An RNA of 177 nucleotides, treated with DMS and 2A3 and read out base by base. The DMS profile rests on 24,012 reads. Conditions: 150 mM KOAc, 10 mM MgCl2 and 150 mM bicine (pH 8.5), 24 C. The 2A3 profile rests on 58,142 reads. For 2A3 the reverse transcriptase was SuperScript II with manganese. DMS adducts were read by reverse transcription with MarathonRT.
RNA sequence: GGGAACGACUCGAGUAGAGUCGAAAAGAUAUGGAUGCAGCACUCCGAUAAGAUCGUGUCGGAAACGACACAGAUCUUUUGACGGAGGCUGCAUCCUAAGUCAAACGGAUAGCUUCGGCUAUCCGAAGAUCCUAUCUUAGUUCGCUAAGAUAGGAUCAAAAGAAACAACAACAACAAC
Reactivity to DMS in 0.01 (KOAc 150mM, MgCl2 10mM, bicine 150mM(pH8.5), 24C), signal-to-noise 8, nucleotides 027 to 126: g000a020u000a100u010g000g000a020u000g000c000a000g010c000a180c010u000c000c000g020a130u010a010a010g010a010u000c000g010u000g010u000c000g010g000a030a010a040c000g010a020c000a000c000a070g020a000u000c000u000u000u000u010g010a190c120g020g000a010g000g010c000u000g010c000a000u000c000c000u000a010a060g000u000c010a130a140a300c030g000g000a020u000a000g010c010u000u020c230g040g010c000u000a000u000c000c000g010a040a070
Reactivity to 2A3 in 0.01 (KOAc 150mM, MgCl2 10mM, bicine 150mM(pH8.5), 24C), signal-to-noise 9, nucleotides 027 to 126: g010a010u020a010u050g000g000a010u020g000c010a000g020c080a220c300u010c020c060g130a200u140a300a010g000a000u000c010g000u010g000u000c000g000g000a030a010a000c010g010a000c020a000c070a030g000a000u010c010u000u050u050u180g300a200c070g000g000a000g000g000c000u000g000c000a000u000c000c000u000a000a000g000u000c000a030a070a080c020g000g000a000u000a000g000c020u060u070c300g140g000c010u020a000u000c000c000g000a010a010